[RMDB]
RNA sequence: GGGAACGACUCGAGUAGAGUCGAAAAGAGGAUACGAACAGCUUCGUGCUUUCGAUAGCUUUGUAGCGGCGGCUACGUUCCCUAGGGGAGCCGCCUCCCCUGCUAUCGGCGCGAGGGGAGUAUCCGACGAUGCUAAUCCUUUCGAGGAUUAGCAUCGAAAAGAAACAACAACAACAAC
Reactivity to 2A3 in 0.01 (KOAc 150mM, MgCl2 10mM, bicine 150mM(pH8.5), 24C), signal-to-noise 3, nucleotides 027 to 126: g150a040g000g000a000u000a010c010g080a210a040c050a060g150c010u040u030c000g000u010g020c030u140u220u190c020g010a010u010a010g000c020u080u100u140g090u190a010g000c030g060g000c010g010g000c020u080a070c100g060u060u060c000c010c000u010a030g050g040g000g010a000g010c030c000g000c010c000u010c000c000c000c000u000g000c000u000a010u020c020g010g000c020g000c000g010a010g030g000g020g010a060g020u000a010u010c000c000g000a000
Reactivity to DMS in 0.01 (KOAc 150mM, MgCl2 10mM, bicine 150mM(pH8.5), 24C), signal-to-noise 3, nucleotides 027 to 126: g000a220g010g020a010u000a000c000g000a190a200c250a120g010c030u010u000c030g020u000g000c040u000u010u020c050g000a010u000a020g010c000u000u000u000g000u010a080g020c100g010g010c080g010g000c020u010a170c080g020u010u000c010c000c010u010a140g030g010g010g010a070g000c030c040g020c090c010u000c020c030c030c020u000g010c020u000a030u000c040g020g000c020g010c010g000a030g000g000g000g010a280g020u000a010u000c000c000g010a180